[RMDB]
RNA sequence: GGGAACGACUCGAGUAGAGUCGAAAACUAUGACCAGAGGCAAGCUUCUUGUGGCUUACACCCCGCCUGGUGCGGGUGCCCCUGAGAGCAUAGACCAAGCAAUGCAAGGCACCUACACCAUAUGGGAGUUUAGAAUUCAUUUCGAUGAAUUCUAAACAAAAGAAACAACAACAACAAC
Reactivity to DMS in 0.01 (KOAc 150mM, MgCl2 10mM, bicine 150mM(pH8.5), 24C), signal-to-noise 7, nucleotides 027 to 126: c080u000a050u000g000a140c050c030a080g000a090g010g020c050a060a060g020c050u000u010c170u010u010g020u000g010g000c060u010u000a100c130a140c130c000c000c030g020c110c080u000g010g020u000g000c020g000g010g010u010g000c010c000c070c080u010g000a170g010a160g010c000a010u000a070g020a220c130c100a070a110g000c080a090a050u000g010c050a180a170g010g000c010a010c010c010u000a080c020a030c010c010a030u010a050u000g000g000g010a130
Reactivity to 2A3 in 0.01 (KOAc 150mM, MgCl2 10mM, bicine 150mM(pH8.5), 24C), signal-to-noise 5, nucleotides 027 to 126: c010u030a090u180g070a070c020c020a020g020a030g080g030c070a040a050g010c030u080u060c020u200u300g070u110g080g000c010u020u050a030c040a070c060c000c000c000g020c020c040u040g040g000u040g010c040g000g020g000u010g010c010c000c000c020u130g120a140g030a020g150c010a020u040a040g020a020c010c030a020a010g040c020a020a060u050g030c010a040a030g030g000c000a010c000c000u010a010c000a020c010c010a020u030a060u110g040g020g000a120